[RMDB]
Source: RMDB library OK2TST, as collected in RNAgym.
Chemical mapping of a 177-nucleotide RNA with 2A3 and DMS.
The RNA was probed in 150 mM KOAc, 10 mM MgCl2 and 150 mM bicine (pH 8.5) at 24 C.
DMS adducts were read by reverse transcription with MarathonRT.
RNA sequence: GGGAACGACUCGAGUAGAGUCGAAAAGUGGGUUGUCCACUGGGAUCAGAUGCUGUGACAACCACCCAGAUCCAGCCACCUCUUCCCUCAUCCACAAGAAUUCACUGAGGGCCGGCCCCAUGGCUAAGACAACUACAGGAUUCGUCCUGUAGUUGUCAAAAGAAACAACAACAACAAC
Reactivity to 2A3 in 0.01 (KOAc 150mM, MgCl2 10mM, bicine 150mM(pH8.5), 24C), signal-to-noise 2, nucleotides 027 to 126: g100u090g010g080g090u090u000g050u070c020c010a000c070u040g050g080g040a170u210c040a030g050a160u130g040c100u060g030u110g110a020c030a010a050c010c000a060c000c000c010a000g000a080u070c070c040a000g050c030c010a030c050c010u020c020u080u010c000c000c000u040c020a040u040c030c030a040c000a090a040g080a100a110u180u110c060a080c100u060g000a030g020g030g000c060c050g000g000c020c010c000c010a040u080g030g000c010u040a120a000
Reactivity to DMS in 0.01 (KOAc 150mM, MgCl2 10mM, bicine 150mM(pH8.5), 24C), signal-to-noise 2, nucleotides 027 to 126: g020u000g000g000g000u000u000g000u000c010c020a080c050u000g000g000g000a150u020c110a050g020a200u010g010c200u010g010u020g020a060c020a010a040c050c010a160c010c020c020a120g000a050u010c050c040a110g000c020c020a090c050c030u000c060u000u010c010c000c010u010c080a080u010c030c080a100c170a110a120g000a060a100u010u010c090a070c120u000g040a070g000g010g020c200c120g000g000c030c000c030c020a110u000g010g030c050u000a070a140